[RMDB]
RNA sequence: GGGAACGACUCGAGUAGAGUCGAAAAGACGCUGAUGCGAUCGACUGUAAGAUAGAUAUACUGAGGAGACAGAUACGUACGGCAAGUAUCGUCGCCAGAAAUACAGUCGCAAAUUGCCGUACGAAGAACCGUCAUGAGCGUUCGCGCUCAUGACGGUAAAAGAAACAACAACAACAAC
Reactivity to 2A3 in 0.01 (KOAc 150mM, MgCl2 10mM, bicine 150mM(pH8.5), 24C), signal-to-noise 2, nucleotides 027 to 126: g000a010c080g000c050u050g050a210u200g050c080g030a100u110c000g000a000c010u000g000u000a030a000g000a080u290a080g110a050u300a050u060a130c060u040g090a000g020g000a070g050a030c040a000g060a040u000a040c000g000u110a000c020g000g000c000a010a010g040u000a000u140c060g000u000c030g070c010c000a030g080a040a000a000u000a000c000a000g000u010c060g090c170a090a110a050u000u000g000c000c030g000u030a030c090g020a040a020g120a100